[RMDB]
RNA sequence: GGGAACGACUCGAGUAGAGUCGAAAAAAGGUGCCAUCAUAUCGGUUAAGAACUCUUAACUCUGAUGGCUUUCGAGUUAUGUGGUGCAUUGAAGCUCACCCUUCAAAUGGUCGUACAGUUCCGUGAAAACCCCGUAAAUCUUCGGAUUUACGGGGUUAAAAGAAACAACAACAACAAC
Reactivity to DMS in 0.01 (KOAc 150mM, MgCl2 10mM, bicine 150mM(pH8.5), 24C), signal-to-noise 2, nucleotides 027 to 126: a060a140g010g000u020g000c000c000a000u000c020a080u010a050u000c290g000g000u000u000a000a000g010a260a140c300u010c000u000u000a000a000c010u000c050u020g000a010u000g000g010c020u000u000u000c020g000a060g000u000u000a030u000g000u010g000g010u000g020c060a110u000u010g000a010a020g000c000u000c210a090c170c220c000u010u000c030a040a030a070u000g010g000u000c040g000u020a050c100a080g010u000u000c010c010g060u010g000a070a050